An RNA of 177 nucleotides, treated with 2A3 and DMS and read out base by base. It was measured as part of the RMDB library OK2TST. The RNA was probed in 150 mM KOAc, 10 mM MgCl2 and 150 mM bicine (pH 8.5) at 24 C. For 2A3, 11,975 sequencing reads were counted.
RNA sequence: GGGAACGACUCGAGUAGAGUCGAAAAAGGCCAUUCGCACCCUGCGCCGGAUCCAAUGAUCCAGCUCAACGCAGUGCUGAUAGCCACUGGCAAUACCAAAGUAGUUUAUCCAGCCGCGUAAAUAUUGGCUAAGUGAAAAAUUCGUUUUUCACUUAGCAAAAGAAACAACAACAACAAC
Reactivity to 2A3 in 0.01 (KOAc 150mM, MgCl2 10mM, bicine 150mM(pH8.5), 24C), signal-to-noise 7, nucleotides 027 to 126: a010g040g010c020c010a070u100u060c020g000c020a020c010c010c030u030g010c010g000c020c010g000g010a010u010c030c070a110a120u300g000a000u000c000c010a020g000c020u040c050a030a070c050g020c080a030g010u030g110c030u050g020a030u030a010g010c010c000a020c030u020g020g020c050a070a080u060a140c010c040a050a100a010g060u070a040g020u030u170u070a090u050c050c020a010g020c010c010g040c000g020u030a080a130a040u240a190u220u160g040
Reactivity to DMS in 0.01 (KOAc 150mM, MgCl2 10mM, bicine 150mM(pH8.5), 24C), signal-to-noise 8, nucleotides 027 to 126: a120g000g010c010c040a070u010u000c170g010c020a090c020c050c040u000g010c190g010c020c070g010g010a020u010c000c300a110a170u010g010a020u000c010c000a050g000c050u000c030a060a080c070g010c130a080g030u000g010c020u000g010a030u000a060g000c020c020a070c070u010g010g000c070a080a080u010a210c060c050a070a080a080g010u000a040g000u000u010u010a060u010c060c030a060g010c020c050g010c100g010u000a060a060a080u000a100u000u010g010